[RMDB]
RNA sequence: GGGAACGACUCGAGUAGAGUCGAAAAGCCUAAGCGUUCGCGCUUAGGCAAAGAAUGCGAAAACGCAACGCCAACGGAAAGGCGAAUUCCGAACAACCAUAAAAAGUUGCCUCUUCGGAGGCAACAACCCCCAUAAUAGGUUCGCCUAUUAUGGGGGAAAAGAAACAACAACAACAAC
Reactivity to DMS in 0.01 (KOAc 150mM, MgCl2 10mM, bicine 150mM(pH8.5), 24C), signal-to-noise 2, nucleotides 027 to 126: g000c000c000u010a010a010g010c000g000u010u020c260g030c020g020c000u000u000a000g010g010c020a020a010a030g000a100a120u010g020c040g010a130a050a130a200c030g010c020a070a120c070g000c020c030a100a080c080g000g000a040a070a080g000g000c010g020a110a100u000u000c000c000g020a110a070c070a030a050c050c060a090u010a060a030a030a080a090g020u000u000g000c000c010u000c000u000u000c130g010g000a010g010g000c000a000a010c000a030a110
Reactivity to 2A3 in 0.01 (KOAc 150mM, MgCl2 10mM, bicine 150mM(pH8.5), 24C), signal-to-noise 3, nucleotides 027 to 126: g000c000c010u000a000a000g000c000g020u040u120c190g030c010g000c120u010u010a000g010g000c010a000a000a000g000a050a030u100g020c020g060a120a070a140a200c050g000c010a020a040c030g000c020c000a040a020c090g090g000a180a060a040g020g000c060g050a110a060u040u020c010c000g010a050a020c050a040a010c040c050a030u190a160a110a020a020a030g000u020u000g000c020c000u020c010u040u040c190g070g000a000g010g000c000a000a000c010a000a000
Structure probing data (DMS and 2A3) for a 177-nucleotide construct. The 2A3 profile rests on 4,219 reads. Conditions: 150 mM KOAc, 10 mM MgCl2 and 150 mM bicine (pH 8.5), 24 C. High DMS reactivity at an A or C suggests that its Watson-Crick edge is free. The data come from the RNA Mapping Database (RMDB), library M2PK50. For DMS, 2,035 sequencing reads were counted. 2A3 adducts were read by reverse transcription with SuperScript II with manganese.